Description: The record gives the reactivity of an RNA of 207 nucleotides to DMS and 2A3. The reactions ran in a buffer of 150 mM KOAc, 10 mM MgCl2 and 150 mM bicine (pH 8.5), at 24 C. Reactivities are given for positions 27 through 156. For DMS, 7,362 sequencing reads were counted. 2A3 adducts were read by reverse transcription with SuperScript II with manganese.
[RMDB]
RNA sequence: GGGAACGACUCGAGUAGAGUCGAAAAGCGGGGCUUGAAACGCGGGUAGCGCGCACGCCCGGCGAAGAAGUUCGCAUACGGGGUGUGCUGGUGCCGAAGUGUCUGCUGCAACGGCACGCUCGACACCUAGAACAUACCGUAUUCGUACGGUAUGUAACGGUAAUACUACGUUCGCGUAGUAUUACCGAAAAGAAACAACAACAACAAC
Reactivity to DMS in 0.01 (KOAc 150mM, MgCl2 10mM, bicine 150mM(pH8.5), 24C), signal-to-noise 3, nucleotides 027 to 156: g020c070g000g010g030g030c080u010u030g020a100a070a070c040g000c030g030g030g010u000a090g000c030g000c070g050c030a060c060g020c010c020c000g050g000c010g080a020a110g020a190a140g030u000u000c010g020c050a120u010a240c050g000g030g060g050u000g020u000g000c020u010g020g020u000g020c010c010g000a050a150g020u000g010u020c040u000g040c020u020g020c190a160a170c110g020g000c020a020c020g000c060u010c010g010a080c010a020c010c000u000a170g010a140a040c020a000u000a000c000c000g030u000a020u000u000c300g000u000a000c000g010g000u010a000u000g000u000a000a100
Reactivity to 2A3 in 0.01 (KOAc 150mM, MgCl2 10mM, bicine 150mM(pH8.5), 24C), signal-to-noise 7, nucleotides 027 to 156: g030c040g000g010g040g010c040u080u110g060a090a090a010c070g010c050g030g000g030u090a040g080c020g000c000g010c050a000c010g150c000c000c000g000g020c020g010a020a010g090a050a030g150u020u020c010g000c030a030u070a260c040g030g000g000g010u010g000u000g000c010u030g000g010u010g010c000c000g020a100a040g020u030g040u070c080u090g050c060u090g010c060a090a020c020g010g000c010a010c020g020c040u010c020g020a010c010a030c010c000u050a070g040a140a010c000a000u000a000c000c000g000u000a010u010u070c150g040u010a000c000g000g000u000a010u000g010u010a060a020